[RMDB]
RNA sequence: GGGAACGACUCGAGUAGAGUCGAAAAGAUAUGGAAAUCUUUCGAUAAGACGUGGCUCUCGGAAACGAGAGCCAUCGUCUUUUGACGAAACUUCCUAAGUCUAAAGAGAAUGGUUCGCCAUUCUCAACAUUGAGAUGCGGUUCGCCGCAUCUCAAUGAAAAGAAACAACAACAACAAC
Reactivity to DMS in 0.01 (KOAc 150mM, MgCl2 10mM, bicine 150mM(pH8.5), 24C), signal-to-noise 2, nucleotides 027 to 126: g000a000u010a300u050g000g000a000a010a030u000c190u000u000u000c000g000a170u000a000a000g000a010c030g060u000g000g040c000u000c000u000c000g020g000a060a110a150c000g010a010g000a020g000c000c000a000u010c010g000u000c000u000u000u000u000g010a270c140g010a010a020a040c120u000u000c000c000u000a080a120g000u000c030u000a100a090a150g010a010g000a000a000u000g020g010u000u010c270g000c000c000a000u000u000c000u000c000a050a080